[RMDB]
RNA sequence: GGGAACGACUCGAGUAGAGUCGAAAACACAAAAGAGACAAGUGGUUUGAAGACAUUCCUCAAAGGAACCCAUAGACUGAAAAUAAUAUGAACAAUGUAAGCAAAAGCAAACUCAGAAAAUGGCAAAGUUGACGAUUUCUUACUACUAAUAUGAUAAAUCCCGAUUAAUAUUCGUAUUAAUCGGGAUAAAAGAAACAACAACAACAAC
Reactivity to DMS in 0.01 (KOAc 150mM, MgCl2 10mM, bicine 150mM(pH8.5), 24C), signal-to-noise 2, nucleotides 027 to 156: c100a040c060a090a070a100a070g000a190g050a080c020a080a060g040u010g010g000u000u020u000g000a140a080g020a190c030a100u000u010c030c000u000c060a070a110a170g040g050a080a070c050c020c030a050u030a070g000a230c060u000g000a070a080a080a120u010a040a150u000a060u000g020a100a120c070a100a130u000g020u010a030a000g030c040a100a010a060a120g010c060a090a060a080c010u010c030a060g020a050a030a070a040u010g030g030c060a040a060a240g030u000u030g000a070c140g010a110u000u000u000c000u000u000a110c030u010a180c020u000a080a080u000a140u000g000a200u010a000a120
Reactivity to 2A3 in 0.01 (KOAc 150mM, MgCl2 10mM, bicine 150mM(pH8.5), 24C), signal-to-noise 2, nucleotides 027 to 156: c100a000c070a030a090a010a010g050a000g000a030c010a030a090g020u000g000g010u020u070u120g020a050a030g040a020c010a040u010u040c020c020u030c060a020a040a030g050g000a020a010c000c000c000a010u000a010g050a010c050u030g020a010a050a020a000u230a010a020u050a040u090g050a040a020c070a060a030u220g020u090a070a000g030c010a030a100a030a020g030c000a000a000a000c000u010c000a010g030a020a140a010a020u070g020g000c000a060a030a130g000u000u040g020a010c070g010a060u000u030u000c010u080u040a020c020u020a010c000u100a030a050u250a080u300g070a010u300a110a200
An RNA of 207 nucleotides, treated with DMS and 2A3 and read out base by base. Conditions: 150 mM KOAc, 10 mM MgCl2 and 150 mM bicine (pH 8.5), 24 C. For 2A3, 838 sequencing reads were counted.